An RNA of 177 nucleotides, treated with 2A3 and DMS and read out base by base.
For 2A3, 647 sequencing reads were counted.
High DMS reactivity at an A or C suggests that its Watson-Crick edge is free.
[RMDB]
RNA sequence: GGGAACGACUCGAGUAGAGUCGAAAACAAAUUGAUAGCGAGAAGACCAAAGCCUUUGAUUUGAAACCGGGAGCAGUCGCUAUUGUGGCAGAAGACUCAAAAGUCGCUCGCUCCAUGCUGGAACAAGCGUACUUUCAACUUUCGAGUUGAAAGUACGAAAAGAAACAACAACAACAAC
Reactivity to 2A3 in 0.01 (KOAc 150mM, MgCl2 10mM, bicine 150mM(pH8.5), 24C), signal-to-noise 1, nucleotides 027 to 126: c010a000a050a030u100u090g030a030u150a050g000c070g010a070g050a230a130g040a100c060c020a100a040a020g030c000c070u060u120u100g160a210u050u100u230g060a160a030a020c050c000g050g000g000a010g020c020a000g100u160c090g000c030u040a130u090u110g020u040g020g000c040a050g070a210a000g000a100c000u030c090a020a070a010a000g030u050c020g040c000u020c080g060c020u000c000c000a050u160g000c060u110g030g070a060a120c000a100a010g020
Reactivity to DMS in 0.01 (KOAc 150mM, MgCl2 10mM, bicine 150mM(pH8.5), 24C), signal-to-noise 2, nucleotides 027 to 126: c010a020a040a110u030u010g010a080u000a050g010c000g030a130g010a110a090g000a100c100c070a070a140a140g020c030c050u000u000u000g000a100u000u000u010g000a030a090a070c080c000g000g010g010a010g000c030a030g030u000c090g020c000u010a040u000u010g020u000g020g020c000a090g000a130a150g000a030c030u000c090a020a030a130a110g000u020c040g030c100u000c120g000c020u000c010c000a060u010g010c100u000g010g000a100a090c130a030a120g010
For 2A3 the reverse transcriptase was SuperScript II with manganese.